[RMDB]
RNA sequence: GGGAACGACUCGAGUAGAGUCGAAAAAAAAAACACUAGAGCUGACAACUAGCUGCAGUGAGCAGCAGCACACAAGGUGAGCUAGGUGGGAGCUGCGCUGAGCAGCAGCACAGCCAUCAGCAAAAAAGAUGAGUAAUAUCUUCGGAUAUUACUCAUCAAAAGAAACAACAACAACAAC
Reactivity to 2A3 in 0.01 (KOAc 150mM, MgCl2 10mM, bicine 150mM(pH8.5), 24C), signal-to-noise 3, nucleotides 027 to 126: a000a000a010a000a020a020c150a020c050u170a130g010a020g050c020u020g040a030c010a060a040c080u040a020g000c000u020g000c010a020g050u040g120a020g000c000a010g000c010a000g030c010a010c010a000c010a080a080g180g020u180g090a050g080c010u040a040g080g020u020g030g070g020a110g000c010u010g000c000g000c020u040g050a040g080c040a020g030c010a000g000c020a020c030a020g050c010c000a050u060c020a000g000c000a000a090a040a030a020a040
Reactivity to DMS in 0.01 (KOAc 150mM, MgCl2 10mM, bicine 150mM(pH8.5), 24C), signal-to-noise 4, nucleotides 027 to 126: a000a010a060a050a040a060c040a050c100u000a040g000a100g010c010u000g010a080c070a070a050c030u020a060g020c010u000g010c020a090g020u010g000a070g020c010a070g030c080a070g020c020a060c040a030c030a080a060g020g010u000g010a080g020c000u010a020g020g010u000g020g010g000a100g020c000u010g020c020g010c060u000g000a170g000c160a060g020c010a010g010c010a060c020a050g000c030c030a120u000c010a020g020c030a000a060a050a070a050a090

Notes: Chemical mapping of a 177-nucleotide RNA with 2A3 and DMS. Reactivities are given for positions 27 through 126. It was measured as part of the RMDB library M2PK90. 2A3 adducts were read by reverse transcription with SuperScript II with manganese. For DMS the reverse transcriptase was MarathonRT. The DMS profile rests on 3,764 reads. For 2A3, 5,819 sequencing reads were counted.